[RMDB]
RNA sequence: GGGAACGACUCGAGUAGAGUCGAAAAGUAUAGAGAGAGGUAUAUGUGUGUGUGGUAUAGAUCGUAAUUGAUCUAUACGAUAUAUAUCUCUCUCGAUAUAUAUACACACACACGUAUAGAAAGAAAAGGGAUAUGAUUACUUCGGUAAUCAUAUCCCAAAAGAAACAACAACAACAAC
Reactivity to 2A3 in 0.01 (KOAc 150mM, MgCl2 10mM, bicine 150mM(pH8.5), 24C), signal-to-noise 2, nucleotides 027 to 126: g070u080a040u260a200g130a020g010a000g000a010g040g010u020a030u000a050u020g130u000g000u040g000u000g000u000g050g000u040a000u000a000g000a010u000c020g050u040a090a130u130u210g020a000u010c000u000a000u000a000c000g000a000u000a000u000a020u000a000u000c010u010c000u000c000u000c010g000a020u000a000u000a000u000a000u050a000c030a000c000a000c000a020c030a000c000g030u020a070u000a100g210a110a230a000g230a020a090a030a030
Reactivity to DMS in 0.01 (KOAc 150mM, MgCl2 10mM, bicine 150mM(pH8.5), 24C), signal-to-noise 1, nucleotides 027 to 126: g010u000a020u030a190g000a140g010a150g000a040g000g000u020a020u000a000u020g000u000g000u000g000u000g000u000g000g080u000a010u000a000g010a000u000c090g000u010a070a030u090u080g010a010u010c000u000a000u000a000c000g000a050u040a000u040a000u000a000u010c000u000c110u040c070u010c030g000a040u020a080u030a040u000a080u000a300c000a040c000a000c010a000c000a040c050g020u010a000u000a000g040a160a030a090g000a110a090a130a110